[RMDB]
The record gives the reactivity of an RNA of 177 nucleotides to DMS and 2A3.
Source: RMDB library TTRDEL, as collected in RNAgym.
Reactivities are given for positions 27 through 126.
DMS adducts were read by reverse transcription with MarathonRT.
The reactions ran in a buffer of 150 mM KOAc, 10 mM MgCl2 and 150 mM bicine (pH 8.5), at 24 C.
Reactivities are rounded to 0.1 and cut off at 0 and 3.
RNA sequence: GGGAACGACUCGAGUAGAGUCGAAAAGAUAUGGAAAGAACUACGAGCGUAGUAGCGAAGAACUCGGAAACGAGGGAGCUAUCAAGCUCGCUUUCCUAAGUCAAACCUGCUGGUUCGCCAGCAGGAAGUCUACUGUUGUGUUCGCACAACAGUAGACAAAAGAAACAACAACAACAAC
Reactivity to DMS in 0.01 (KOAc 150mM, MgCl2 10mM, bicine 150mM(pH8.5), 24C), signal-to-noise 2, nucleotides 027 to 126: g000a060u000a300u000g000g000a020a000a000g000a160a050c060u010a300c000g010a000g000c010g000u040a300g010u000a000g020c000g020a160a070g000a110a120c000u010c000g000g000a080a050a190c010g000a020g000g000g000a050g010c010u000a000u000c030a300a300g000c010u000c010g010c000u010u000u000c000c000u000a010a160g000u000c020a060a090a200c000c000u000g000c000u000g000g010u020u000c150g030c000c010a000g010c000a000g040g000a020a050
Reactivity to 2A3 in 0.01 (KOAc 150mM, MgCl2 10mM, bicine 150mM(pH8.5), 24C), signal-to-noise 2, nucleotides 027 to 126: g020a010u050a050u170g000g010a030a010a010g020a110a050c140u180a070c300g020a000g000c030g050u210a020g020u000a000g040c000g120a170a040g030a070a010c000u000c020g010g040a050a090a060c000g000a000g000g000g050a020g000c010u000a010u100c030a090a010g000c000u000c000g000c000u000u000u000c010c000u020a130a010g060u050c020a030a000a190c000c010u010g000c010u010g000g070u050u090c300g070c110c000a000g020c000a000g000g010a000a030